The record gives the reactivity of an RNA of 207 nucleotides to DMS and 2A3. The RNA was probed in 150 mM KOAc, 10 mM MgCl2 and 150 mM bicine (pH 8.5) at 24 C.
[RMDB]
RNA sequence: GGGAACGACUCGAGUAGAGUCGAAAACGCUGGGCUGAGAUAGCUGUCGCCAAGGGAGGCAGCUAGCUACUGAAGCGCGCACGGUAGCUAGCUGCCGAAGAACUUGGGCGACCGAAACAGCCUGUGCUGAAGCGCGCACGGCAACCGAAAGGUGCGAGGUACGUUAAAUGUUCGCAUUUAACGUACCAAAAGAAACAACAACAACAAC
Reactivity to DMS in 0.01 (KOAc 150mM, MgCl2 10mM, bicine 150mM(pH8.5), 24C), signal-to-noise 1, nucleotides 027 to 156: c090g030c010u000g030g000g050c070u060g000a120g030a210u000a100g030c150u010g010u000c000g040c000c000a040a040g010g000g010a040g040g010c000a070g010c010u000a030g010c000u000a050c000u000g040a000a090g020c000g010c000g000c030a240c010g000g050u010a030g030c010u000a000g010c000u010g000c020c000g000a030a030g010a140a180c010u010u000g020g010g010c020g030a070c010c090g030a150a200a180c030a020g010c000c000u010g030u000g000c010u010g000a140a080g030c050g030c000g030c000a010c060g010g040c020a170a240c010c010g010a090a150a190g030g020u000g000c110g030a300
Reactivity to 2A3 in 0.01 (KOAc 150mM, MgCl2 10mM, bicine 150mM(pH8.5), 24C), signal-to-noise 3, nucleotides 027 to 156: c040g020c020u040g010g010g000c000u000g020a020g050a200u190a170g110c180u100g060u010c000g000c000c000a000a000g020g000g010a050g000g000c000a000g000c010u000a000g000c000u000a000c000u010g040a160a020g000c010g000c000g000c010a000c030g000g000u010a000g000c010u000a000g000c000u010g010c000c010g000a000a000g000a000a000c000u010u000g110g120g010c000g010a000c000c000g060a050a100a000c000a010g000c000c010u080g050u090g000c040u070g040a070a030g010c020g000c010g030c000a010c010g070g030c030a130a190c010c000g040a070a030a010g020g000u030g000c030g020a110